[RMDB]
RNA sequence: GGGAACGACUCGAGUAGAGUCGAAAAGAUAUGGAAAAGCUUUCCAUCUCAUCACAAGGGAGAAUACAGUCGGAAACGACUGCGGUUCGACGAUCUUGUUGAUGAGAUGGAAAGCUUUUCCUAAGUCGUUAAUUUUAGUCUUCGGACUAAAAUUAACAAAAGAAACAACAACAACAAC
Reactivity to DMS in 0.01 (KOAc 150mM, MgCl2 10mM, bicine 150mM(pH8.5), 24C), signal-to-noise 1, nucleotides 027 to 126: g010a100u030a300u020g010g000a000a000a010a010g000c000u000u000u000c000c000a020u010c000u010c000a000u000c000a000c010a010a010g000g000g010a020g000a030a020u000a120c020a020g010u000c010g010g000a170a140a220c000g010a020c000u000g060c030g020g030u000u000c000g010a100c300g010a020u010c000u000u000g000u020u020g020a000u010g000a040g010a010u000g020g000a000a000a000g020c000u000u000u000u010c000c000u000a020a120g000u010c110